Source information: The record gives the reactivity of an RNA of 177 nucleotides to DMS and 2A3. The 2A3 profile rests on 937 reads. The DMS profile rests on 1,134 reads. Conditions: 150 mM KOAc, 10 mM MgCl2 and 150 mM bicine (pH 8.5), 24 C. It was measured as part of the RMDB library VIROID.
[RMDB]
RNA sequence: GGGAACGACUCGAGUAGAGUCGAAAACUCUGGGGAGAAAAGGGUGGAUCGGAUGGGAAGAGUAGAUCCCAUGGGAAUCCGCUGGUUCCCCUGAUGUCCAGUCCCUCCCCAGUCCGAGUGAAGGGGGCGCUAGAACGAAGUUCGCUUCGUUCUAGCGAAAAGAAACAACAACAACAAC
Reactivity to DMS in 0.01 (KOAc 150mM, MgCl2 10mM, bicine 150mM(pH8.5), 24C), signal-to-noise 1, nucleotides 027 to 126: c090u010c000u010g000g020g000g030a060g000a040a080a180a110g010g010g020u000g000g000a040u010c060g010g000a120u010g010g000g000a060a120g010a060g020u000a070g000a020u000c000c010c020a070u010g020g020g000a110a040u010c010c050g020c020u000g030g040u000u000c030c020c000c040u010g000a170u010g010u000c000c030a070g000u000c020c070c000u000c000c000c000c030a030g000u000c040c020g030a120g000u000g020a080a110g010g000g010g010g030
Reactivity to 2A3 in 0.01 (KOAc 150mM, MgCl2 10mM, bicine 150mM(pH8.5), 24C), signal-to-noise 1, nucleotides 027 to 126: c050u070c010u020g040g000g060g010a010g020a060a210a090a030g040g040g000u040g020g000a080u130c070g020g020a050u130g050g020g010a050a000g030a050g020u080a030g020a060u000c000c000c040a070u180g040g060g010a090a200u000c010c040g050c070u050g000g270u030u070c000c010c010c020u000g040a030u120g020u000c000c020a040g270u050c010c000c010u020c000c010c010c010a010g000u030c010c010g110a120g070u180g100a090a150g020g010g040g000g000